[RMDB]
RNA sequence: GGGAACGACUCGAGUAGAGUCGAAAAGAAGCGCUUCGAAAGGACUUACGAGGCCGUGGUGAAGGGCGUCUAUCACAACCCGGACGACCUUAUCAGCCUGGACAGCGAGGGGAUCGGGGAGCAUAUGACCAAACUCAGGGCCGAAGUGUGCCGCAUCGCAUGUAUAGCAGUUCGCUGCUAUACAUGCAAAAGAAACAACAACAACAAC
Reactivity to DMS in 0.01 (KOAc 150mM, MgCl2 10mM, bicine 150mM(pH8.5), 24C), signal-to-noise 1, nucleotides 027 to 156: g000a060a080g040c070g000c040u000u000c020g010a120a170a190g000g000a100c030u000u010a210c070g040a040g020g000c050c050g060u010g000g030u000g000a090a030g000g010g010c010g020u000c010u000a080u000c110a080c170a100a120c070c000c050g000g010a050c000g000a030c020c040u000u010a070u010c060a090g000c000c000u000g000g000a100c010a090g000c090g060a070g080g050g000g010a070u010c100g010g000g000g000a070g020c040a060u000a060u050g120a070c090c020a080a070a120c030u000c030a110g000g000g000c020c020g050a100a130g000u020g020u000g000c050c000g000c040a140u030c090
Reactivity to 2A3 in 0.01 (KOAc 150mM, MgCl2 10mM, bicine 150mM(pH8.5), 24C), signal-to-noise 3, nucleotides 027 to 156: g120a030a020g030c030g000c070u040u070c070g060a090a060a080g030g050a090c050u110u050a040c150g020a060g020g010c010c030g060u050g010g030u080g050a040a020g020g000g000c030g020u000c030u050a110u130c080a040c020a200a150c020c020c000g010g010a000c000g080a150c000c000u050u050a140u130c020a000g070c010c010u060g010g060a040c040a030g050c040g020a060g000g030g000g010a040u070c030g030g050g000g000a020g000c010a020u030a080u210g020a040c050c000a050a020a060c070u080c090a070g000g040g010c010c030g000a060a080g050u050g030u080g050c010c070g070c040a090u150c090
Chemical mapping of a 207-nucleotide RNA with DMS and 2A3. 2A3 is a SHAPE reagent: it acylates the 2'-hydroxyl of flexible nucleotides of all four kinds. Conditions: 150 mM KOAc, 10 mM MgCl2 and 150 mM bicine (pH 8.5), 24 C. For DMS the reverse transcriptase was MarathonRT. Values cover nucleotides 27 to 156. Source: RMDB library OK3TST, as collected in RNAgym.